Conditions: 150 mM KOAc, 10 mM MgCl2 and 150 mM bicine (pH 8.5), 24 C. Chemical mapping of a 177-nucleotide RNA with DMS and 2A3. 2A3 is a SHAPE reagent: it acylates the 2'-hydroxyl of flexible nucleotides of all four kinds. 2A3 adducts were read by reverse transcription with SuperScript II with manganese. High DMS reactivity at an A or C suggests that its Watson-Crick edge is free.
RNA sequence: GGGAACGACUCGAGUAGAGUCGAAAAGCUCUGACAGACAGAUCGAACAACAAAGAGAGAUCGAAAAUCUUAGGGGAGAGAACGAAUCUGUCGUCUUCUCUAGGACAUUGUCGAUCAGAUGUCCAAAGACCAUUCUUUGGUUCGCCAAGGAAUGGUCAAAAGAAACAACAACAACAAC
Reactivity to DMS in 0.01 (KOAc 150mM, MgCl2 10mM, bicine 150mM(pH8.5), 24C), signal-to-noise 9, nucleotides 027 to 126: g000c090u000c010u010g010a050c220a190g010a060c030a050g000a020u000c010g020a300a180c060a060a080c300a080a120a080g000a070g010a270g000a040u010c010g000a080a060a130a190u000c000u000u000a000g000g000g000g000a010g010a100g010a070a040c030g000a080a140u040c120u030g000u000c030g000u010c000u000u000c000u000c000u000a010g000g000a000c120a070u010u010g010u010c010g000a170u000c010a030g000a040u020g010u010c020c050a070a090a080
Reactivity to 2A3 in 0.01 (KOAc 150mM, MgCl2 10mM, bicine 150mM(pH8.5), 24C), signal-to-noise 9, nucleotides 027 to 126: g020c010u000c010u020g020a010c000a050g020a000c000a010g010a030u020c010g050a070a060c030a060a020c040a030a300a010g120a020g010a000g010a020u020c020g020a030a060a020a060u010c010u010u010a010g000g000g020g000a010g010a010g040a080a030c030g030a090a130u160c140u220g150u050c030g110u000c000u010u000c000u000c000u000a010g000g010a010c030a090u080u120g040u020c010g000a020u010c010a010g030a070u080g060u000c010c010a030a020a010